[RMDB]
Chemical mapping of a 207-nucleotide RNA with 2A3 and DMS. The 2A3 profile rests on 5,502 reads. 2A3 adducts were read by reverse transcription with SuperScript II with manganese. Values cover nucleotides 27 to 156.
RNA sequence: GGGAACGACUCGAGUAGAGUCGAAAAGGGACGCCUUUAGAAGAAGAGGCUAGGUGGUAUUCCGGUGUGGGAUACUUGGUAAUAUGUAACGCUAAUUGCAUAAGAUUGUACGACGGAAUUUACAGUCAAAACGGUCCUGCGUUCGCGCAGGACCGAACAAUAAUUGAGUCUUCGGACUCAAUUAUUGAAAAGAAACAACAACAACAAC
Reactivity to 2A3 in 0.01 (KOAc 150mM, MgCl2 10mM, bicine 150mM(pH8.5), 24C), signal-to-noise 6, nucleotides 027 to 156: g030g000g010a030c050g020c000c010u050u060u100a170g030a260a010g030a060a010g010a030g010g020c020u040a020g010g080u060g040g000u040a050u060u020c020c030g060g040u140g010u120g050g020g000a010u030a080c030u030u070g010g010u060a050a060u040a080u110g020u050a050a020c030g010c140u060a120a040u110u040g010c010a030u020a110a060g030a070u030u120g040u060a030c050g020a010c040g080g030a020a010u080u070u090a110c040a020g020u030c020a020a040a030a070c010g000g010u000c000c000u010g000c000g020u030u070c200g000c000g000c080a010g000g000a000c000c000g000a010a000
Reactivity to DMS in 0.01 (KOAc 150mM, MgCl2 10mM, bicine 150mM(pH8.5), 24C), signal-to-noise 2, nucleotides 027 to 156: g000g010g020a100c130g010c000c010u010u000u000a090g010a190a160g020a150a160g000a060g000g010c040u000a060g000g020u010g020g010u000a080u000u000c020c040g030g030u020g040u010g010g000g000a060u010a020c020u000u000g030g000u000a080a120u000a060u000g030u000a080a110c090g000c100u010a080a110u010u010g000c030a090u000a080a190g010a120u000u000g000u000a040c110g020a070c010g000g030a080a140u020u000u000a040c020a100g010u000c040a040a060a080a130c050g040g010u000c000c020u010g010c010g010u000u000c300g000c070g000c020a000g000g000a000c000c000g000a010a000